[RMDB]
RNA sequence: GGGAACGACUCGAGUAGAGUCGAAAAAGCACGGUUUUUGAGGACGCAUUUUGUCCGUGCGGUAAUGCCCUCCUUUACACUUUCUCGCAUGGUGCGGGAGUGUGGAGAGGAAACAGAAGCUAGUCUCGAUAGGCGGUUAACUUCGGUUAACCGCCAACUAUAAGCCAGAGUUCGCUCUGGCUUAUAGAAAAGAAACAACAACAACAAC
Reactivity to DMS in 0.01 (KOAc 150mM, MgCl2 10mM, bicine 150mM(pH8.5), 24C), signal-to-noise 2, nucleotides 027 to 156: a100g000c000a030c030g010g000u010u020u020u000u010g010a130g000g020a150c080g030c070a110u000u000u000u000g040u010c000c010g030u000g000c000g050g030u000a080a090u000g000c010c010c000u000c060c010u000u000u000a050c000a020c020u010u010u010c030u000c030g000c020a300u010g070g040u020g060c000g010g000g010a010g050u000g040u000g010g010a050g000a070g000g000a060a050a040c030a060g000a120a130g030c060u000a180g000u010c010u000c030g000a190u000a140g010g020c010g080g010u000u000a020a010c000u000u020c300g020g010u000u000a020a020c000c010g000c010c000a010a000
Reactivity to 2A3 in 0.01 (KOAc 150mM, MgCl2 10mM, bicine 150mM(pH8.5), 24C), signal-to-noise 2, nucleotides 027 to 156: a000g000c000a000c010g000g010u010u000u000u000u080g090a160g030g030a010c040g020c110a110u000u010u040u030g030u000c010c010g010u000g060c020g050g000u120a060a010u120g070c000c000c020u000c010c000u030u100u130a010c010a000c010u050u170u010c010u010c000g060c030a110u280g200g040u280g140c010g000g000g010a010g010u030g000u000g010g000a040g020a000g040g000a040a000a000c010a020g030a020a020g030c110u160a040g030u000c030u010c040g100a110u100a160g010g010c000g010g040u000u000a000a000c000u050u060c240g020g000u000u010a000a000c040c000g000c000c000a000a000
The record gives the reactivity of an RNA of 207 nucleotides to DMS and 2A3. For 2A3 the reverse transcriptase was SuperScript II with manganese. DMS adducts were read by reverse transcription with MarathonRT. The reactions ran in a buffer of 150 mM KOAc, 10 mM MgCl2 and 150 mM bicine (pH 8.5), at 24 C.